[RMDB]
RNA sequence: GGGAACGACUCGAGUAGAGUCGAAAACUGGGAAUCCAGCAGGCGCCCAACAGCACCGUCUGCUCCUAUCUGAACAAGCUGCUGUGGAUCCUGACCGGCAACUUCGCGAAAAAGGGUGGCCAACACCGGUACGGAAAGUGUUCGCACUUUCCGUACCAAAAGAAACAACAACAACAAC
Reactivity to DMS in 0.01 (KOAc 150mM, MgCl2 10mM, bicine 150mM(pH8.5), 24C), signal-to-noise 2, nucleotides 027 to 126: c100u000g010g010g000a110a070u010c040c010a050g010c050a090g000g020c180g010c040c060c000a050a070c110a090g020c000a030c010c070g060u000c030u020g000c060u000c030c030u000a070u010c050u030g030a030a130c200a060a070g000c110u000g030c020u000g010u010g010g000a110u050c040c060u000g000a070c060c000g000g070c030a040a020c100u000u000c100g000c040g000a020a070a120a080a090g000g000g020u020g000g000c090c020a030a040c100a060c160c070
Reactivity to 2A3 in 0.01 (KOAc 150mM, MgCl2 10mM, bicine 150mM(pH8.5), 24C), signal-to-noise 5, nucleotides 027 to 126: c020u020g000g020g060a090a120u130c030c020a030g000c030a000g070g000c010g010c020c050c020a050a080c040a020g050c010a020c030c010g040u020c020u030g040c030u000c010c000u130a160u090c060u070g050a110a040c050a130a030g020c030u040g000c010u010g040u080g090g010a040u020c020c000u050g050a070c000c000g030g000c020a030a030c040u150u120c020g030c000g090a010a090a020a040a030g110g010g000u030g030g030c050c030a080a010c030a040c020c050